[RMDB]
RNA sequence: GGGAACGACUCGAGUAGAGUCGAAAAUAAAAGAGGACAAAGUGCGCAUCUUGAAAAACUCGGUCAGCUUCCUUUUCAACAAGCUUUCUAGAAAUUCACCCACUGAAGUUACAGACAUAGUUGUCGGAGCUAUAAGCACCCAGAAGGUUAGGAGCUACACCAAUUAGAAAUUCGUUUCUAAUUGGUGAAAAGAAACAACAACAACAAC
Reactivity to DMS in 0.01 (KOAc 150mM, MgCl2 10mM, bicine 150mM(pH8.5), 24C), signal-to-noise 1, nucleotides 027 to 156: u000a060a070a060a100g010a110g010g000a170c050a090a050a120g010u000g020c010g050c040a090u000c010u010u020g000a100a090a100a050a070c020u000c010g020g000u010c020a110g000c040u000u000c030c030u020u020u000u020c030a040a100c060a050a120g040c000u000u000u000c040u010a070g010a100a080a120u000u010c060a110c030c020c010a200c010u000g000a060a090g040u010u010a070c010a100g010a060c070a050u000a070g050u000u000g020u010c040g020g000a100g020c030u000a070u000a030a090g000c040a060c040c020c020a090g030a060a070g030g000u000u010a000g020g010a080g020c070u010a150
Reactivity to 2A3 in 0.01 (KOAc 150mM, MgCl2 10mM, bicine 150mM(pH8.5), 24C), signal-to-noise 2, nucleotides 027 to 156: u170a010a090a020a020g040a050g040g000a020c070a110a120a010g000u050g020c040g010c030a060u080c010u110u090g070a110a060a040a050a080c050u040c060g010g040u030c020a010g070c040u050u000c000c000u070u080u000u120c050a080a070c010a010a080g010c020u070u110u080c030u100a060g050a050a050a010u140u040c010a100c000c020c020a010c080u070g030a100a000g050u090u050a080c040a020g030a020c010a090u130a020g040u020u040g030u060c010g010g030a020g000c020u040a020u000a140a040g010c010a020c000c040c010a030g030a090a030g020g000u030u040a030g020g050a020g000c120u150a010